[RMDB]
The data come from the RNA Mapping Database (RMDB), library OK1LIB.
Chemical mapping of a 177-nucleotide RNA with DMS and 2A3.
For 2A3 the reverse transcriptase was SuperScript II with manganese.
RNA sequence: GGGAACGACUCGAGUAGAGUCGAAAAUGCGCGAGCUGACGCUCGACUCGCUGCGGUCAGCCAUCGGCCUGGUACCCGAAGAUGCCGUCCUGUUCUCCGGAACGAUCGGUGCAAACAUCGCCUAUGGGCCGAUUUACCAGUUCGCUGGUAAAUCGGCAAAAGAAACAACAACAACAAC
Reactivity to DMS in 0.01 (KOAc 150mM, MgCl2 10mM, bicine 150mM(pH8.5), 24C), signal-to-noise 1, nucleotides 027 to 126: u020g090c050g000c020g010a000g000c000u000g000a060c140g000c010u000c000g020a020c110u030c070g010c060u030g030c000g010g000u080c080a060g000c000c090a090u070c040g000g010c020c030u010g000g070u000a100c000c040c050g020a090a030g000a100u050g000c040c000g000u020c220c060u120g010u000u000c040u020c100c040g000g070a050a030c060g000a030u000c100g020g000u010g000c010a160a120a080c180a160u010c040g070c060c060u000a100u030g000g000
Reactivity to 2A3 in 0.01 (KOAc 150mM, MgCl2 10mM, bicine 150mM(pH8.5), 24C), signal-to-noise 3, nucleotides 027 to 126: u140g000c060g000c020g020a060g040c100u150g130a080c110g010c040u040c040g030a030c040u040c090g040c060u070g040c040g020g060u040c030a030g000c010c000a070u060c000g010g020c050c010u070g070g000u100a080c020c040c040g010a100a020g010a010u080g000c000c000g040u110c080c030u050g010u070u000c050u000c050c130g090g010a040a040c040g000a080u080c010g020g000u050g040c000a020a120a050c030a130u080c090g060c030c000u060a100u090g040g090
The 2A3 profile rests on 1,659 reads.